This 177-nucleotide RNA was probed chemically with DMS and 2A3.
2A3 adducts were read by reverse transcription with SuperScript II with manganese.
The data come from the RNA Mapping Database (RMDB), library OK2TST.
The 2A3 profile rests on 5,209 reads.
The RNA was probed in 150 mM KOAc, 10 mM MgCl2 and 150 mM bicine (pH 8.5) at 24 C.
[RMDB]
RNA sequence: GGGAACGACUCGAGUAGAGUCGAAAAGCUGCGAAUGGUGCUGAUUGGAUUGUCAUCACAGCUGGAUGGGGAUUAGCGGUUACAAUGGGUGUGUUUGCUGUCGGUCAAUUCUCAGGUGCACAUUUAACCAGUUCUAUAGUUUCGACUAUAGAACUGGAAAAGAAACAACAACAACAAC
Reactivity to DMS in 0.01 (KOAc 150mM, MgCl2 10mM, bicine 150mM(pH8.5), 24C), signal-to-noise 5, nucleotides 027 to 126: g010c030u000g010c060g010a110a060u010g020g010u010g010c050u000g010a120u020u010g020g020a150u010u010g000u000c050a050u000c050a070c050a040g010c050u000g010g010a160u010g000g000g000g000a100u010u010a080g020c060g000g010u000u010a060c160a060a110u010g000g000g010u000g020u000g000u000u010u000g020c030u000g010u000c080g000g000u000c050a040a090u000u000c030u000c050a070g020g020u010g000c060a050c130a080u000u000u000a070a210
Reactivity to 2A3 in 0.01 (KOAc 150mM, MgCl2 10mM, bicine 150mM(pH8.5), 24C), signal-to-noise 4, nucleotides 027 to 126: g040c030u050g000c030g030a110a090u070g040g000u040g000c040u030g030a140u070u070g080g020a030u050u120g080u090c020a010u040c010a040c020a050g040c020u020g020g040a070u050g010g020g000g000a040u060u120a050g020c050g010g030u080u040a070c090a100a090u070g060g010g020u050g020u040g010u050u050u100g040c010u030g020u050c020g000g010u030c010a030a060u140u000c020u000c030a020g070g000u050g020c030a020c010a110u050u050u050a050a070